[RMDB]
RNA sequence: GGGAACGACUCGAGUAGAGUCGAAAAACCUAUGGAUUCGUCCAUAGGUGCUGGCGCGCGCCCUUUGUCCUGUCGCGUGUGCGUGGUGGGCGAUAUACGCGCAAUAGUGACAAUUCGUUGUCACUAAUUCGUUCUAGAUUUUCGAAUCUAGAACGAAAAAAGAAACAACAACAACAAC
Reactivity to DMS in 0.01 (KOAc 150mM, MgCl2 10mM, bicine 150mM(pH8.5), 24C), signal-to-noise 5, nucleotides 027 to 126: a030c000c000u000a010u010g010g000a020u010u010c190g010u000c000c000a010u000a000g000g010u000g010c150u000g010g020c060g000c010g000c040g010c020c010c070u000u000u000g010u010c020c000u000g000u000c010g020c010g020u010g030u010g010c020g040u000g000g020u000g010g010g010c010g000a070u000a100u000a140c010g010c010g020c020a110a090u010a010g000u000g010a010c000a010a020u000u010c200g010u000u000g010u000c000a010c000u000a020a090
Reactivity to 2A3 in 0.01 (KOAc 150mM, MgCl2 10mM, bicine 150mM(pH8.5), 24C), signal-to-noise 4, nucleotides 027 to 126: a000c000c000u000a010u000g000g010a000u020u070c190g040u000c060c010a010u000a000g010g000u010g040c110u080g090g010c020g000c000g000c000g020c020c000c000u100u110u150g100u110c010c020u080g050u130c000g010c030g040u250g220u240g170c030g000u030g020g060u040g000g020g000c000g000a000u030a010u020a160c010g000c010g000c000a000a020u090a000g000u000g000a000c000a010a020u060u070c230g060u090u020g010u000c000a000c000u000a000a200
An RNA of 177 nucleotides, treated with DMS and 2A3 and read out base by base. Source: RMDB library M2PK50, as collected in RNAgym. For DMS, 10,068 sequencing reads were counted.